Structure probing data (2A3 and DMS) for a 170-nucleotide construct. For DMS, 24,390 sequencing reads were counted. Source: RMDB library 15KLIB, as collected in RNAgym.

RNA sequence: GGGAACGACUCGAGUAGAGUCGAAAACUCCAUCUGAUCCGUCCGGGGCCUCUUCGCCGGGGGAGCCCCCUCCCCGUCCUUCCCUUUUCUGAUUAUUCCGACGAUGUUCCCCAGCCAGGGAUUUUCUAGCCGAUGACGUUCGCGUCAUCGAAAAGAAACAACAACAACAAC
Reactivity to 2A3 in 0.01 (KOAc 150mM, MgCl2 10mM, bicine 150mM(pH8.5), 24C), signal-to-noise 5, nucleotides 027 to 129: c020u000c000c010a080u030c060u080g060a000u030c030c050g100u040c030c010g060g000g010g010c040c050u040c020u090u110c040g010c070c000g010g010g000g000g000a020g010c000c000c000c000c000u010c000c000c000c000g020u020c000c000u000u020c010c000c000u040u040u040u000c010u030g040a060u010u140a040u100u020c030c020g020a030c050g040a050u140g040u050u030c000c000c000c010a010g000c030c000a030g000g020g050a020u060u020u000u000c010u020a020g060c000
Reactivity to DMS in 0.01 (KOAc 150mM, MgCl2 10mM, bicine 150mM(pH8.5), 24C), signal-to-noise 4, nucleotides 027 to 129: c070u000c000c000a060u050c080u050g010a090u020c080c050g050u050c040c130g000g020g000g030c090c020u000c080u030u010c010g040c000c030g020g000g010g010g000a000g000c130c020c010c010c040u000c020c030c020c000g020u050c020c040u000u000c020c010c020u000u000u000u000c040u010g000a090u020u030a130u000u000c030c010g010a080c110g020a120u070g000u030u020c020c010c010c050a130g040c090c050a060g000g000g000a080u020u000u020u030c050u000a020g000c300